The record gives the reactivity of an RNA of 177 nucleotides to 2A3 and DMS.
For DMS, 134,378 sequencing reads were counted.
2A3 adducts were read by reverse transcription with SuperScript II with manganese.
The reactions ran in a buffer of 150 mM KOAc, 10 mM MgCl2 and 150 mM bicine (pH 8.5), at 24 C.
Reactivities are given for positions 27 through 126.
[RMDB]
RNA sequence: GGGAACGACUCGAGUAGAGUCGAAAACAGCUGCACGAGACCGAGACGCAUUGCUUGGUGUUCAGGUUUGCUUAUCAUCAGAGAUGGGCGUGUUGGAUUUUAGUCUUUGUGUGGUGUGCGAAGCUGGGUGGAAUGCGUCGUUCGCGAUGUAUUUCACAAAAGAAACAACAACAACAAC
Reactivity to 2A3 in 0.01 (KOAc 150mM, MgCl2 10mM, bicine 150mM(pH8.5), 24C), signal-to-noise 9, nucleotides 027 to 126: c010a000g010c010u030g000c010a000c020g060a040g030a030c010c020g020a020g020a030c020g020c040a060u040u250g030c020u030u060g020g000u050g040u060u040c030a030g030g050u090u180u210g040c000u020u040a020u030c020a010u010c030a020g040a020g020a260u110g040g040g000c030g010u060g100u050u100g070g070a170u060u060u050u230a060g010u010c000u020u070u130g050u030g010u020g050g040u090g020u020g020c030g080a070a020g010c020u050g050g070
Reactivity to DMS in 0.01 (KOAc 150mM, MgCl2 10mM, bicine 150mM(pH8.5), 24C), signal-to-noise 9, nucleotides 027 to 126: c030a070g010c020u010g000c010a030c030g010a140g010a070c040c040g010a070g000a050c050g010c060a050u020u020g000c050u010u010g010g010u020g010u010u010c060a070g010g010u020u020u030g010c030u000u010a030u010c020a060u020c130a090g010a110g010a040u010g000g010g010c030g010u010g000u010u010g010g000a130u020u010u020u020a100g000u010c020u000u010u030g010u020g010u000g000g010u070g010u000g000c030g010a060a050g010c020u000g000g000